[RMDB]
This 177-nucleotide RNA was probed chemically with DMS.
RNA sequence: GGGAACGACUCGAGUAGAGUCGAAAAGAUAUGGACUAGCAAUGAUGUGGCCGACUUGGACCCAUUAGCGAAGCUCGGAAACGAGCUUCGCUAAUGGCUAGUCGUGCCAUUGAGCUAGUCCUAAGUCCUAGUAAAGUUCGUUCGCGAACUUUACUAGAAAAGAAACAACAACAACAAC
Reactivity to DMS in 0.01 (KOAc 150mM, MgCl2 10mM, bicine 150mM(pH8.5), 24C), signal-to-noise 2, nucleotides 027 to 126: g000a120u020a300u020g000g000a020c000u000a000g010c010a190a210u010g020a090u000g000u000g000g010c010c000g000a010c010u000u010g010g000a190c300c000c010a010u000u010a000g020c000g000a030a020g010c000u000c020g010g010a100a130a240c020g010a000g000c000u000u010c010g010c000u000a000a000u000g010g010c040u000a010g000u000c000g010u010g030c000c000a000u000u000g000a090g000c000u000a000g000u000c000c010u000a020a090g010u000c070
The reactions ran in a buffer of 150 mM KOAc, 10 mM MgCl2 and 150 mM bicine (pH 8.5), at 24 C. It was measured as part of the RMDB library TTRINS.